The record gives the reactivity of an RNA of 177 nucleotides to DMS and 2A3.
For DMS, 3,444 sequencing reads were counted.
RNA sequence: GGGAACGACUCGAGUAGAGUCGAAAAUAGCUGACGUUCGCGUCAGCUAAAAGCACCAAAACCUCCUGGCGGUGCGGCGCCGGCCCCGCCGGGAAGGCGGCCAACUCGAUGGGUUCGCCCAUCGAAAACCGGUAAAACUAUUCGUAGUUUUACCGGUAAAAGAAACAACAACAACAAC
Reactivity to DMS in 0.01 (KOAc 150mM, MgCl2 10mM, bicine 150mM(pH8.5), 24C), signal-to-noise 4, nucleotides 027 to 126: u000a010g020c010u010g010a000c000g030u000u020c250g020c000g010u000c000a010g010c010u010a000a010a050a110g000c160a170c010c030a080a070a110a180c040c000u010c010c000u000g000g000c020g010g000u000g010c070g030g010c060g000c080c070g000g010c030c070c010c010g020c040c010g000g010g020a010a020g010g020c060g020g000c090c080a090a100c200u000c010g010a000u000g000g000g020u000u020c180g000c000c000c000a000u010c000g000a000a020a130
Reactivity to 2A3 in 0.01 (KOAc 150mM, MgCl2 10mM, bicine 150mM(pH8.5), 24C), signal-to-noise 1, nucleotides 027 to 126: u050a000g000c000u000g010a010c000g020u040u020c210g040c000g110u020c010a000g020c000u000a000a000a000a000g010c010a050c040c020a030a040a100a130c010c010u030c000c010u010g000g010c010g000g030u020g000c030g030g070c060g050c060c050g040g000c000c000c000c000g010c000c020g000g000g000a000a000g020g010c010g040g020c030c000a050a060c070u010c010g000a000u000g000g010g000u030u040c100g070c040c010c000a000u010c010g000a020a010a000